Chemical mapping of a 207-nucleotide RNA with 2A3 and DMS. Values cover nucleotides 27 to 156. It was measured as part of the RMDB library OK3TST.

[RMDB]
RNA sequence: GGGAACGACUCGAGUAGAGUCGAAAACUAGGAGAAGCUUCGAUCUCUCCUAGAGCUUCAGGAAGUCAGAGUCAGGAAGGACUGACUGACUCUAGUCCUGAUCUCCUUCCUGAAGAGGAGAUCGAAGUCAGGAAGGAAGAGCUCUCUCUUCGAAGGAAAAGUUUAGGGAGUUCGCUCCCUAAACUUUAAAAGAAACAACAACAACAAC
Reactivity to 2A3 in 0.01 (KOAc 150mM, MgCl2 10mM, bicine 150mM(pH8.5), 24C), signal-to-noise 1, nucleotides 027 to 156: c030u040a050g030g090a060g060a100a060g020c020u020u010c010g030a070u010c010u030c000u000c050c000u010a010g010a040g140c010u000u000c000a000g010g000a030a020g050u190c170a010g030a030g030u000c000a010g000g050a030a040g060g020a050c060u080g100a100c010u050g030a070c060u020c000u070a000g060u010c000c000u030g000a050u060c020u000c010c000u010u050c010c030u020g010a000a000g020a030g030g000a050g000a000u080c040g000a040a000g040u020c030a020g000g080a040a030g090g000a040a010g010a000g010c000u000c000u020c000u000c010u080u020c010g030a030a060g020g030a020
Reactivity to DMS in 0.01 (KOAc 150mM, MgCl2 10mM, bicine 150mM(pH8.5), 24C), signal-to-noise 1, nucleotides 027 to 156: c030u000a040g000g000a100g000a110a120g000c000u000u000c060g010a030u000c020u000c000u010c040c010u010a180g000a110g040c020u000u010c030a060g060g030a040a070g020u020c020a030g050a100g010u000c020a020g020g060a120a180g020g030a090c060u000g000a270c060u000g000a140c070u000c000u000a000g000u010c030c010u020g030a030u010c000u000c000c000u000u000c020c010u000g000a040a050g000a300g020g010a090g010a090u000c010g000a060a170g020u000c060a050g020g000a160a070g000g020a040a050g000a060g050c140u000c100u010c020u000c010u010u000c020g010a140a130g000g000a090

The RNA was probed in 150 mM KOAc, 10 mM MgCl2 and 150 mM bicine (pH 8.5) at 24 C.
2A3 adducts were read by reverse transcription with SuperScript II with manganese.